[RMDB]
RNA sequence: GGGAACGACUCGAGUAGAGUCGAAAACCUGGUUUAGGGUUCCAGGCUAGCCCUAUCUAUCGGUCGAGAUGCGAGCGCUUAAGCUCAAAUUGAGUGGCUGAGUUUGUGGUGAACGUAUCCCUAUGUUAAAACGGUAGCUGCUUCGGCAGCUACCGAACAUUGUCAUCAACUUCGGUUGAUGACAAUGAAAAGAAACAACAACAACAAC
Reactivity to 2A3 in 0.01 (KOAc 150mM, MgCl2 10mM, bicine 150mM(pH8.5), 24C), signal-to-noise 2, nucleotides 027 to 156: c000c000u010g020g000u040u080u060a030g060g010g000u030u080c010c030a010g030g000c030u030a040g020c010c020c000u070a080u040c040u030a130u070c020g030g010u020c030g050a020g010a120u050g010c030g000a000g000c050g050c180u230u290a140a040g000c000u010c010a040a060a020u030u040g020a030g020u120g020g000c030u030g020a030g010u060u150u060g030u090g040g020u060g090a110a000c060g020u070a070u080c000c000c000u030a080u070g030u050u140a030a110a030a030c010g010g000u000a000g000c000u000g030c000u030u060c150g070g000c000a000g000c000u000a000c000c000g000a000a000
Reactivity to DMS in 0.01 (KOAc 150mM, MgCl2 10mM, bicine 150mM(pH8.5), 24C), signal-to-noise 2, nucleotides 027 to 156: c010c000u010g010g000u000u000u020a050g030g010g000u010u010c010c020a100g020g080c020u000a200g020c020c000c020u000a050u000c080u010a060u010c030g020g000u010c020g000a270g000a050u010g010c300g010a050g040c040g030c230u000u020a070a190g030c000u020c010a030a180a070u000u010g010a180g030u020g020g000c020u000g010a070g010u000u000u010g020u000g000g030u010g010a100a080c080g020u000a150u020c020c010c010u000a120u010g010u000u000a070a060a110a180c000g030g000u000a020g020c000u000g020c000u000u000c300g030g030c020a010g010c000u000a000c010c000g000a000a060